[RMDB]
RNA sequence: GGGAACGACUCGAGUAGAGUCGAAAAGUUCCCUCUUAGCGUGGAGGUUUAACUACGCUCGUUCCCCAUAUCGGUGUGGGCGCACCGGAUUUAUAAAUCAAAGUCAUUUAGGGAACGGAAAGGAACAAAAAUCCAUGGGAGUUCGCUCCCAUGGAAACACACAAAACCUGUUCGCAGGUUUUGUGUGAAAAGAAACAACAACAACAAC
Reactivity to DMS in 0.01 (KOAc 150mM, MgCl2 10mM, bicine 150mM(pH8.5), 24C), signal-to-noise 1, nucleotides 027 to 156: g010u000u000c000c000c000u010c030u000u000a030g000c020g080u000g150g000a120g000g020u010u000u000a090a140c010u000a040c000g010c020u010c000g000u000u000c010c000c010c090a160u010a080u000c000g040g020u000g010u000g030g040g010c060g030c010a050c000c000g000g010a150u000u000u000a110u000a110a110a060u010c100a160a170a080g010u010c050a100u000u010u010a040g020g020g010a000a040c020g020g000a040a110a060g000g000a070a190c110a010a090a090a240a160u000c000c000a020u020g000g020g020a060g020u000u010c300g040c020u000c010c000c000a010u000g010g000a010a040a060
An RNA of 207 nucleotides, treated with DMS and read out base by base. High DMS reactivity at an A or C suggests that its Watson-Crick edge is free. Reactivities are rounded to 0.1 and cut off at 0 and 3. Source: RMDB library M2RFPK, as collected in RNAgym.